[RMDB]
RNA sequence: GGGAACGACUCGAGUAGAGUCGAAAAUGGCGCAACUCAUCCCCACCAAGGCGACCGCUGACGGCGUGCCGCCGACCAAGCUCGACGACUUUCUAGGAGGCGCAGCGUGACCGAGGCAGGAGACCCGACGAUGUGGCGGGACGACGAUUCAAAGGCGUCCGUAUGUUAUUUUCGAAUAACAUACGGAAAAAGAAACAACAACAACAAC
Reactivity to DMS in 0.01 (KOAc 150mM, MgCl2 10mM, bicine 150mM(pH8.5), 24C), signal-to-noise 2, nucleotides 027 to 156: u000g000g000c010g020c050a090a070c070u020c040a130u000c010c010c000c140a080c070c040a090a200g050g020c010g000a070c060c020g020c030u010g000a160c150g000g010c020g010u000g030c020c010g040c030c000g000a050c060c020a110a150g020c020u010c030g000a070c020g000a060c030u000u000u000c050u000a140g050g030a080g010g010c020g020c030a070g020c050g030u010g010a100c020c030g020a170g030g000c040a100g000g000a200g030a100c020c000c050g000a050c060g000a140u010g010u010g000g000c040g000g020g010a040c020g010a050c050g070a130u000u000c020a030a080a100g010g020c040g000
Reactivity to 2A3 in 0.01 (KOAc 150mM, MgCl2 10mM, bicine 150mM(pH8.5), 24C), signal-to-noise 2, nucleotides 027 to 156: u060g040g000c050g000c050a080a060c040u030c070a060u090c040c020c000c010a010c020c060a040a080g030g000c030g010a070c020c010g000c030u050g080a060c080g050g030c000g050u090g010c000c010g000c000c000g030a040c020c040a070a040g010c010u030c030g060a060c020g070a080c070u040u100u010c050u100a060g060g020a020g010g020c030g010c040a010g020c030g040u060g030a060c000c030g020a050g020g000c040a040g040g020a040g020a050c010c020c010g040a060c040g050a080u100g090u080g040g000c020g040g000g010a010c010g010a000c020g040a010u080u100c080a090a080a000g090g000c010g040